[RMDB]
RNA sequence: GGGAACGACUCGAGUAGAGUCGAAAAGAUAUGGAUAUACUUUGAUCGCUGAACUACUUUAAUCGGAAACGAUUAGAGCAGCGGGAGUAUAUCCUAAGUCAAACAUCCUGCGUUCGCGCAGGAUGAAGUGUAGAUAUGUCUUCGGACAUAUCUACACAAAAGAAACAACAACAACAAC
Reactivity to 2A3 in 0.01 (KOAc 150mM, MgCl2 10mM, bicine 150mM(pH8.5), 24C), signal-to-noise 4, nucleotides 027 to 126: g030a020u070a030u170g000g000a000u000a010u000a000c000u090u080u150g200a210u300c010g010c010u010g020a110a030c050u200a070c000u300u020u030a020a010u010c010g020g000a070a050a050c000g000a010u000u000a010g020a010g000c010a000g010c010g020g010g000a010g000u010a010u010a000u000c000c000u000a040a010g050u000c040a030a070a130c000a010u000c000c010u000g000c000g040u020u060c300g000c000g000c120a000g020g000a000u000g000a030a010
Reactivity to DMS in 0.01 (KOAc 150mM, MgCl2 10mM, bicine 150mM(pH8.5), 24C), signal-to-noise 3, nucleotides 027 to 126: g010a030u000a300u010g000g000a020u000a000u000a010c000u000u000u010g020a140u020c010g000c010u000g010a080a090c080u010a300c010u000u000u000a000a000u010c000g010g010a080a090a160c010g020a010u000u000a000g000a030g000c020a000g000c010g010g000g000a020g010u000a010u000a010u000c000c000u000a010a090g010u000c020a090a120a280c010a000u000c000c000u000g010c040g020u000u010c190g010c010g000c010a000g010g010a000u010g000a010a050

An RNA of 177 nucleotides, treated with 2A3 and DMS and read out base by base.
For DMS the reverse transcriptase was MarathonRT.
For 2A3, 7,732 sequencing reads were counted.
2A3 adducts were read by reverse transcription with SuperScript II with manganese.
The reactions ran in a buffer of 150 mM KOAc, 10 mM MgCl2 and 150 mM bicine (pH 8.5), at 24 C.
For DMS, 2,841 sequencing reads were counted.